RNA sequence: GGGAACGACUCGAGUAGAGUCGAAAAGCCUCUAGCGAUUGCAAAACGCUGUUUGCGCAAUGAUCUGGAUUUAGCGCAAGUAGGUCCGAAAUCCAGAUCAACAUUUCGGACAACCGCGCUAAUUAAAUGAGUGGAUGUUAUUCGUAACAUCCACUCAAAAAGAAACAACAACAACAAC
Reactivity to 2A3 in 0.01 (KOAc 150mM, MgCl2 10mM, bicine 150mM(pH8.5), 24C), signal-to-noise 1, nucleotides 027 to 126: g020c000c000u000c010u060a010g050c030g140a110u010u190g010c000a100a000a000a000c030g090c180u060g070u100u050u060g010c010g000c050a040a090u060g020a100u000c020u030g020g020a030u010u030u130a010g020c000g000c000a010a050g080u070a060g000g080u000c000c000g000a010a010a000u080c050c030a050g020a090u030c000a040a000c020a010u040u030u020c020g000g000a000c010a100a060c050c040g000c000g000c010u040a050a070u130u110a100a090a120
Reactivity to DMS in 0.01 (KOAc 150mM, MgCl2 10mM, bicine 150mM(pH8.5), 24C), signal-to-noise 3, nucleotides 027 to 126: g010c020c020u010c060u020a060g020c130g000a080u000u000g040c100a070a120a060a060c020g000c110u000g010u000u000u000g000c210g000c030a100a040u000g000a110u010c020u000g010g000a040u000u000u000a040g000c000g000c010a050a080g030u000a090g030g010u000c010c000g010a010a010a050u000c100c110a120g000a080u010c150a060a060c150a070u000u000u000c000g010g000a060c010a080a050c070c070g000c010g010c020u000a010a030u010u000a020a050a100

Chemical mapping of a 177-nucleotide RNA with 2A3 and DMS. It was measured as part of the RMDB library M2PK90. The RNA was probed in 150 mM KOAc, 10 mM MgCl2 and 150 mM bicine (pH 8.5) at 24 C. DMS adducts were read by reverse transcription with MarathonRT. 2A3 adducts were read by reverse transcription with SuperScript II with manganese.